[RMDB]
RNA sequence: GGGAACGACUCGAGUAGAGUCGAAAACAUCCACUGCUACGGCAGUGGAUGAACGAGGUAGGUACGCCUACCUCGAAAGGUGGAUGUGACCAUAAACAUUAAACGUCCAUGGUACGCCAUGGACGAACAUUAGGGGUGAGUUCGCUCACCCCUAAUGAAAAGAAACAACAACAACAAC
Reactivity to DMS in 0.01 (KOAc 150mM, MgCl2 10mM, bicine 150mM(pH8.5), 24C), signal-to-noise 4, nucleotides 027 to 126: c010a000u000c000c010a010c000u000g010c000u000a080c260g040g000c000a010g010u000g000g000a000u000g000a030a080c010g010a000g000g020u000a000g000g010u010a070c300g030c010c000u000a010c000c000u000c000g000a010a050a080g010g030u000g010g010a060u000g000u000g010a080c020c030a210u010a050a060a070c020a050u010u010a060a110a160c020g000u000c000c000a020u000g000g010u000a100c300g020c010c000a000u000g000g000a000c000g000a020a090
Reactivity to 2A3 in 0.01 (KOAc 150mM, MgCl2 10mM, bicine 150mM(pH8.5), 24C), signal-to-noise 4, nucleotides 027 to 126: c010a000u020c000c000a000c000u000g000c000u020a070c180g160g010c010a000g000u000g010g000a010u010g000a000a000c010g000a000g000g000u000a000g000g030u030a010c210g080c030c000u000a010c000c000u000c000g010a010a010a020g020g010u040g030g030a040u040g040u070g180a070c010c020a130u120a020a060a000c020a040u050u110a100a140a060c020g000u010c000c000a000u010g000g000u060a040c260g050c050c010a010u020g020g000a000c000g000a010a000

Source information:
Conditions: 150 mM KOAc, 10 mM MgCl2 and 150 mM bicine (pH 8.5), 24 C. This 177-nucleotide RNA was probed chemically with DMS and 2A3. 2A3 adducts were read by reverse transcription with SuperScript II with manganese. Reactivities are given for positions 27 through 126.